[RMDB]
RNA sequence: GGGAACGACUCGAGUAGAGUCGAAAAAAUGGAUGCUGUACUCGUUGCCUUCUCUGGAAUAAAUACUUUAUCCUAUGUAAGUAUAGAUCAAGCACGUGAAAGUCCUUAUAACAGACAUACCUUACUCCACACUUAGGCUAUUCGUAGCCUAAGUGUGAAAAGAAACAACAACAACAAC
Reactivity to DMS in 0.01 (KOAc 150mM, MgCl2 10mM, bicine 150mM(pH8.5), 24C), signal-to-noise 4, nucleotides 027 to 126: a060a060u010g000g010a070u000g010c040u000g010u000a150c080u000c030g020u000u000g010c040c010u000u010c060u010c050u000g010g010a100a060u000a090a100a070u000a030c030u000u000u000a070u010c080c080u010a110u010g000u000a030a060g020u020a050u010a040g020a070u000c090a050a100g010c050a030c050g010u010g010a050a080a090g000u010c030c020u000u010a100u010a070a050c100a030g000a100c040a050u000a050c050c020u010u000a060c090u000c050
Reactivity to 2A3 in 0.01 (KOAc 150mM, MgCl2 10mM, bicine 150mM(pH8.5), 24C), signal-to-noise 4, nucleotides 027 to 126: a000a010u120g020g010a030u040g020c020u010g010u050a050c010u010c040g070u080u060g000c020c000u070u030c040u000c000u040g050g060a100a050u120a100a130a010u090a040c010u080u100u060a080u080c010c030u060a070u210g040u050a010a090g010u000a050u040a070g030a030u070c030a010a010g010c000a010c050g030u060g080a100a010a010g050u050c020c000u090u110a170u040a110a050c020a010g100a050c010a050u120a190c030c000u050u040a030c040u000c030

This 177-nucleotide RNA was probed chemically with DMS and 2A3. The reactions ran in a buffer of 150 mM KOAc, 10 mM MgCl2 and 150 mM bicine (pH 8.5), at 24 C.